Source: RMDB library M2RFPK, as collected in RNAgym. An RNA of 207 nucleotides, treated with 2A3 and DMS and read out base by base. Values are in units of 0.01, from 0 to 300, in steps of 10. For 2A3, 2,478 sequencing reads were counted. The RNA was probed in 150 mM KOAc, 10 mM MgCl2 and 150 mM bicine (pH 8.5) at 24 C.

RNA sequence: GGGAACGACUCGAGUAGAGUCGAAAAUAAUAGUCGAAAGUAUUGCUAUAGUUAAGGUUGCGCUUGCCUAUUUAGGCAUACUUCUCAGGAUGGCGCGUUGCAGUCCAACAAGAUCCAGGGACUGUACAAAACAGGCUCGUGUUCGCACGAGCCUGAACUAACAUGUCAAGUUCGCUUGACAUGUUAGAAAAGAAACAACAACAACAAC
Reactivity to 2A3 in 0.01 (KOAc 150mM, MgCl2 10mM, bicine 150mM(pH8.5), 24C), signal-to-noise 4, nucleotides 027 to 156: u130a000a040u040a040g120u070c060g040a030a070a030g050u040a060u140u280g040c020u080a070u120a300g080u110u150a140a040g030g050u090u090g010c080g000c030u060u140g020c000c000u070a180u110u180u190a020g000g000c000a000u000a010c020u040u090c090u010c100a040g110g030a050u080g040g000c010g000c020g040u020u060g000c010a000g010u000c010c000a030a050c050a080a150g040a130u070c060c010a040g000g040g000a000c000u010g000u020a020c070a010a080a010a020c000a000g000g000c000u010c010g050u020g040u060u070c300g000c130a000c000g000a000g000c000c000u000g000a000a000
Reactivity to DMS in 0.01 (KOAc 150mM, MgCl2 10mM, bicine 150mM(pH8.5), 24C), signal-to-noise 2, nucleotides 027 to 156: u000a110a130u000a050g000u000c060g020a090a060a130g020u000a020u000u010g010c020u010a070u000a060g010u010u020a060a090g010g010u000u000g040c070g040c050u010u010g010c010c020u000a140u000u000u000a090g050g030c010a050u000a020c050u000u000c020u020c050a120g020g010a100u000g010g020c030g040c050g010u000u000g010c000a060g000u000c020c010a080a180c050a090a140g010a120u010c010c010a170g010g010g010a020c010u000g020u000a040c080a040a070a090a190c020a030g020g010c020u000c000g030u000g040u010u010c300g070c010a010c000g010a030g010c000c000u000g000a020a060